[RMDB]
RNA sequence: GGGAACGACUCGAGUAGAGUCGAAAAGAAAACAAGUACCGAGAACAUUGUUUUCGCUGCUUGGCGUUGCCGUUUUGUGUUGCAGUUGGUUGGGUAACGCCGCAAAUACCAACGGAAUAGACAGAUAAUCCAUACCAUUAUUCGUAAUGGUAUGGAUAAAAGAAACAACAACAACAAC
Reactivity to 2A3 in 0.01 (KOAc 150mM, MgCl2 10mM, bicine 150mM(pH8.5), 24C), signal-to-noise 7, nucleotides 027 to 126: g020a010a020a000a020c020a000a020g020u060a040c040c090g040a020g030a070a040c130a300u110u270g010u010u000u000u000c000g000c030u030g000c010u010u090g010g000c010g010u000u010g030c020c010g070u040u020u140u170g200u040g030u040u100g050c080a080g020u030u050g060g030u030u090g090g000g010u040a020a000c010g020c030c000g000c020a030a050a010u130a020c000c010a010a010c020g010g040a070a080u090a060g090a040c050a030g100a030u140a090
Reactivity to DMS in 0.01 (KOAc 150mM, MgCl2 10mM, bicine 150mM(pH8.5), 24C), signal-to-noise 8, nucleotides 027 to 126: g000a080a040a090a110c030a000a020g000u000a030c260c030g000a050g000a030a030c020a160u010u040g010u000u000u000u000c000g010c160u000g000c010u000u000g010g010c040g000u000u010g000c020c020g020u020u020u010u010g010u020g000u000u000g010c080a130g010u000u000g000g010u000u030g010g000g010u000a050a060c250g000c010c010g000c110a030a050a090u030a070c010c010a020a020c030g000g000a080a080u030a060g000a090c140a060g010a120u020a090